[RMDB]
RNA sequence: GGGAACGACUCGAGUAGAGUCGAAAACUGUCUAUUCUGUUACAUUGAUGUAUUUGCCUAUUCUUUCAAUGAUGCUACCCAGUCUUGAUCACUAUGGCCUAAUAUAAGGUCUUGAAAUUGGGUAGGGUAGGUCCUCUUUCUCAUCCUUCAGUAUUGAAGCUAAAUACGGAUUCGUCCGUAUUUAGCUAAAAGAAACAACAACAACAAC
Reactivity to DMS in 0.01 (KOAc 150mM, MgCl2 10mM, bicine 150mM(pH8.5), 24C), signal-to-noise 2, nucleotides 027 to 156: c050u000g000u030c030u000a050u010u010c070u010g020u000u000a060c080a110u000u000g000a110u020g020u000a060u010u010u000g010c010c070u000a090u010u000c000u000u010u000c070a040a100u000g020a070u000g010c000u000a050c020c010c010a080g010u000c010u000u000g000a140u000c040a110c090u000a080u000g010g010c020c020u020a110a140u010a190u010a080a030g030g030u000c010u000u000g020a040a020a060u010u010g010g000g020u000a060g030g020g040u000a050g010g000u010c020c030u010c050u010u000u000c030u000c010a100u000c010c000u000u000c020a120g040u000a160u000u000g000a180
Reactivity to 2A3 in 0.01 (KOAc 150mM, MgCl2 10mM, bicine 150mM(pH8.5), 24C), signal-to-noise 6, nucleotides 027 to 156: c030u020g040u040c030u060a130u140u040c030u080g090u100u070a060c030a060u040u110g040a040u060g070u080a120u050u110u110g020c000c010u050a080u150u100c050u070u120u060c040a060a070u120g050a040u100g070c010u010a010c000c000c000a030g010u010c020u070u120g060a100u070c020a030c130u100a090u190g020g000c000c020u060a140a110u140a100u060a300a030g000g000u030c000u010u040g060a050a070a060u060u020g000g000g010u010a010g010g000g010u020a020g010g000u030c010c000u030c000u020u070u020c050u020c020a070u080c010c030u100u100c030a060g060u140a140u130u120g030a030
An RNA of 207 nucleotides, treated with DMS and 2A3 and read out base by base.
The data come from the RNA Mapping Database (RMDB), library OK3TST.
For 2A3, 4,143 sequencing reads were counted.
Reactivities are rounded to 0.1 and cut off at 0 and 3.